[RMDB]
RNA sequence: GGGAACGACUCGAGUAGAGUCGAAAAUCACAAAGCGGAUUUAGCUCGGUUGGGAGAGGUCCAGACCGAAGAUCUGGUUGUCCUGUGCUCGACUCACAGAAUUCGCACCAUAAACAACGGGAGAUUCAGGCUCAUACGAUUUCGAUCGUAUGAGCCUAAAAGAAACAACAACAACAAC
Reactivity to 2A3 in 0.01 (KOAc 150mM, MgCl2 10mM, bicine 150mM(pH8.5), 24C), signal-to-noise 2, nucleotides 027 to 126: u000c000a000c130a140a120a000g000c000g000g000a000u000u000u130a090g020c030u000c050g110g000u020u020g020g080g000a100g000a000g000g000u060c000c000a000g050a000c000c150g120a040a020g000a250u020c020u030g020g000u020u220g110u150c000c000u040g040u080g050c070u000c000g020a000c030u010c010a060c000a000g100a000a000u000u000c000g000c030a020c000c000a090u160a100a290a010c080a060a000c070g040g000g070a080g020a090u070u160c120
The record gives the reactivity of an RNA of 177 nucleotides to 2A3.
High 2A3 reactivity points to a flexible backbone, as in loops and unpaired stretches.
Conditions: 150 mM KOAc, 10 mM MgCl2 and 150 mM bicine (pH 8.5), 24 C.
It was measured as part of the RMDB library OK1LIB.